The record gives the reactivity of an RNA of 177 nucleotides to 2A3 and DMS. Reactivities are given for positions 27 through 126. Conditions: 150 mM KOAc, 10 mM MgCl2 and 150 mM bicine (pH 8.5), 24 C. The DMS profile rests on 9,819 reads. It was measured as part of the RMDB library OK2TST. For 2A3 the reverse transcriptase was SuperScript II with manganese. DMS adducts were read by reverse transcription with MarathonRT.
[RMDB]
RNA sequence: GGGAACGACUCGAGUAGAGUCGAAAAUCGAAGAACACCGAGCAGGCGCUCAGGGUCUGGGUGCCGACCUUGUCGAUGGCCGAAUAGCUCAGCCCUUCGCGCUCGACGUCGAUGAUGAACAUCGAUAGAUGCGAAAAUUAUUCGUAAUUUUCGCAUCAAAAGAAACAACAACAACAAC
Reactivity to 2A3 in 0.01 (KOAc 150mM, MgCl2 10mM, bicine 150mM(pH8.5), 24C), signal-to-noise 5, nucleotides 027 to 126: u070c010g020a030a020g070a080a030c040a030c110c020g000a010g050c080a050g110g040c020g010c020u030c060a010g010g010g150u110c020u000g020g000g020u030g000c000c000g000a010c010c000u170u160g210u200c130g100a120u160g000g010c000c020g020a070a060u090a190g040c010u010c020a000g000c000c000c000u000u020c020g000c000g000c000u030c020g040a030c040g070u010c010g000a010u010g010a030u100g060a110a040c010a030u010c000g010a010u050a090
Reactivity to DMS in 0.01 (KOAc 150mM, MgCl2 10mM, bicine 150mM(pH8.5), 24C), signal-to-noise 7, nucleotides 027 to 126: u000c020g010a070a070g000a180a100c030a040c030c020g000a040g020c050a120g000g010c010g020c030u000c220a020g000g000g010u010c010u010g010g010g010u000g010c110c010g010a020c020c010u010u000g020u020c290g000a090u000g010g010c010c000g010a080a160u010a220g010c000u000c010a020g010c030c010c010u000u000c190g000c020g010c010u000c020g000a080c100g010u000c000g010a020u000g000a120u000g010a120a120c080a070u000c010g010a020u000a080